[RMDB]
RNA sequence: GGGAACGACUCGAGUAGAGUCGAAAAGUAACAAUCUUCGGAUUGUUACAUAGCCUCCAGGUGGAAACCAAAACCUUAGAAAGAAAUGAGAAAGAAAAAGAAGUGACUACCUGUUCGCAGGUAGUAAUAUGUCACUAAUGUUCGCAUUAGUGACAUAAAAAGAAACAACAACAACAAC
Reactivity to 2A3 in 0.01 (KOAc 150mM, MgCl2 10mM, bicine 150mM(pH8.5), 24C), signal-to-noise 2, nucleotides 027 to 126: g010u010a020a010c000a010a020u000c000u030u010c080g050g010a010u010u000g010u000u000a000c000a000u020a010g070c000c000u030c050c010a030g040g000u030g030g100a090a070a070c020c000a060a060a030a100c000c040u130u130a060g110a100a120a000g050a040a150a050u190g000a040g050a070a120a020g080a020a120a010a020a000g110a030a050g080u080g090a020c000u000a010c010c000u000g010u040u040c210g030c060a000g000g000u000a010g000u000a010a000
Reactivity to DMS in 0.01 (KOAc 150mM, MgCl2 10mM, bicine 150mM(pH8.5), 24C), signal-to-noise 4, nucleotides 027 to 126: g000u000a000a010c000a000a000u000c000u000u020c180g030g000a030u000u000g010u000u000a000c000a090u000a120g010c050c020u000c090c070a100g010g030u000g010g010a080a120a110c050c030a050a060a080a080c090c040u010u000a110g010a080a070a080g010a050a050a060u000g000a110g000a050a060a070g010a060a060a040a110a070g000a060a050g000u010g000a020c000u000a000c000c000u000g000u010u020c220g030c010a000g000g000u000a000g000u000a030a080
Chemical mapping of a 177-nucleotide RNA with 2A3 and DMS. Conditions: 150 mM KOAc, 10 mM MgCl2 and 150 mM bicine (pH 8.5), 24 C. Reactivities are given for positions 27 through 126. For 2A3 the reverse transcriptase was SuperScript II with manganese.